[RMDB]
RNA sequence: GGGAACGACUCGAGUAGAGUCGAAAAUGUCAAUUCGUUGACAGUUGAACCGUAGGAGCUGUAAGUUGCGCAUGAGCCAGUACACUUCGAAAGAGGUGUACGCUCAUGAACUACGCAAUAUCAGCUCCUAAACGGAGAGUUACUGCUUCGGCAGUAAUCCAUCUUACACUUUCGAGUGUAAGAUGGAAAAAGAAACAACAACAACAAC
Reactivity to 2A3 in 0.01 (KOAc 150mM, MgCl2 10mM, bicine 150mM(pH8.5), 24C), signal-to-noise 4, nucleotides 027 to 156: u090g010u030c020a040a040u110u110c290g120u140u030g010a030c000a040g030u060u090g050a140a070c000c000g000u010a030g010g010a000g000c000u000g020u090a220a210g040u130u010g000c020g000c000a000u000g000a000g040c060c040a000g020u000a000c020a000c020u000u010c010g040a070a040a020g000a000g000g010u000g000u000a000c000g000c000u000c000a010u000g030a010a020c060u140a050c020g020c000a000a000u020a020u030c010a000g000c000u000c000c000u000a000a010a000c010g020g000a090g030a010g090u040u040a000c010u000g030c000u050u080c230g130g000c000a010g000u000a000a010
Reactivity to DMS in 0.01 (KOAc 150mM, MgCl2 10mM, bicine 150mM(pH8.5), 24C), signal-to-noise 3, nucleotides 027 to 156: u000g010u000c010a020a030u020u010c250g030u000u000g020a010c000a100g000u010u000g050a040a200c010c000g030u000a060g000g010a030g020c010u000g010u000a080a250g010u000u000g000c010g040c000a030u000g010a010g030c000c060a300g060u000a000c000a000c000u010u010c000g010a180a120a300g000a030g020g030u000g010u000a000c000g000c010u010c010a030u000g000a090a210c070u010a090c000g000c020a020a000u000a300u000c010a030g010c000u010c000c000u000a000a000a060c000g010g010a180g000a160g000u000u000a010c000u000g000c020u000u020c290g030g040c000a040g020u010a030a100